The record gives the reactivity of an RNA of 177 nucleotides to DMS. The reactions ran in a buffer of 150 mM KOAc, 10 mM MgCl2 and 150 mM bicine (pH 8.5), at 24 C. DMS adducts were read by reverse transcription with MarathonRT. The data come from the RNA Mapping Database (RMDB), library OK2TST.
RNA sequence: GGGAACGACUCGAGUAGAGUCGAAAAAACAAUAUGCUAAGGAAGAACCUAACAUGUCAGUCAUAGCACCUCUGCAAGUCUAUCCAUUAUGGAUAGGUUUGGUACCAUGUAAAGAACCAAAAUUGUGAUAAUGGCGUGGAUUCGUCCACGCCAUUAUAAAAGAAACAACAACAACAAC
Reactivity to DMS in 0.01 (KOAc 150mM, MgCl2 10mM, bicine 150mM(pH8.5), 24C), signal-to-noise 1, nucleotides 027 to 126: a060a100c070a020a040u000a070u020g020c040u000a080a180g000g010a180a060g010a090a040c110c040u000a090a010c100a000u000g010u000c050a100g040u020c100a040u010a100g010c040a070c090c020u000c040u000g020c030a010a000g010u000c010u000a000u000c000c000a220u000u010a170u070g000g000a000u000a000g020g000u000u000u000g000g010u000a050c100c030a040u010g020u000a180a020a090g000a100a110c100c040a020a070a020a120u010u000g010u000g000